[RMDB]
RNA sequence: GGGAACGACUCGAGUAGAGUCGAAAAGCAGCACCCGCGCAGAGCACUAGCUGUACGUCCGAUCUGAAUCGGUGCGCGGCUGUUACCAGGUGGACGACUCCCUUUUGCCGGGUGAUUCGCCCGACGAAUUUCGAAGUGAGUUCGCUCACUUCGAAAUAAAAGAAACAACAACAACAAC
Reactivity to DMS in 0.01 (KOAc 150mM, MgCl2 10mM, bicine 150mM(pH8.5), 24C), signal-to-noise 2, nucleotides 027 to 126: g010c060a060g000c040a080c240c070c010g020c100g020c010a050g000a090g030c110a110c140u020a100g020c070u010g010u010a110c110g000u010c020c020g000a020u000c210u000g020a170a090u000c020g000g020u000g010c040g010c030g000g010c040u000g000u000u000a120c110c050a070g000g010u000g020g010a080c030g030a100c060u000c000c010c040u000u000u000u000g000c070c060g000g000g010u010g000a100u000u000c040g020c020c000c000g010a070c130g000a070
Reactivity to 2A3 in 0.01 (KOAc 150mM, MgCl2 10mM, bicine 150mM(pH8.5), 24C), signal-to-noise 1, nucleotides 027 to 126: g000c020a000g040c000a010c030c010c010g030c050g000c010a010g030a020g060c030a030c230u170a080g010c020u030g060u160a080c050g060u000c010c000g050a040u010c060u300g060a130a110u050c060g010g000u040g010c040g010c010g000g000c020u070g010u030u030a070c000c030a000g080g010u080g000g050a050c070g050a050c040u080c000c000c000u020u040u040u100g080c010c000g000g020g000u020g060a100u110u160c080g040c000c000c000g040a070c090g070a070

Conditions: 150 mM KOAc, 10 mM MgCl2 and 150 mM bicine (pH 8.5), 24 C. Structure probing data (DMS and 2A3) for a 177-nucleotide construct. For 2A3, 1,466 sequencing reads were counted. For DMS, 2,115 sequencing reads were counted. Values are in units of 0.01, from 0 to 300, in steps of 10. DMS adducts were read by reverse transcription with MarathonRT. Source: RMDB library OK2TST, as collected in RNAgym.